[RMDB]
RNA sequence: GGGAACGACUCGAGUAGAGUCGAAAAGAUUCUUGAGGGAAGCAAUUCUGCAGAGACAUCUCCACCCUGGGGUGGCGUCGCCAGAAUACACCGACCCGUUACAGGGAAAUUGGCUACUUGGCUGGACGGUACAUUAAGGCUUCGGCCUUAAUGUACCAAAAGAAACAACAACAACAAC
Reactivity to DMS in 0.01 (KOAc 150mM, MgCl2 10mM, bicine 150mM(pH8.5), 24C), signal-to-noise 1, nucleotides 027 to 126: g010a100u010u000c020u000u000g010a170g010g000g020a120a140g010c220a080a140u010u000c010u010g000c090a280g000a090g010a050c170a010u030c030u000c050c010a180c030c000c000u020g000g020g010g040u010g030g020c170g050u000c010g020c000c030a060g000a050a060u010a090c140a020c010c000g030a090c020c000c000g000u000u000a170c180a130g030g000g000a080a090a080u010u000g000g000c050u000a080c130u000u020g000g000c020u000g060g000a050c180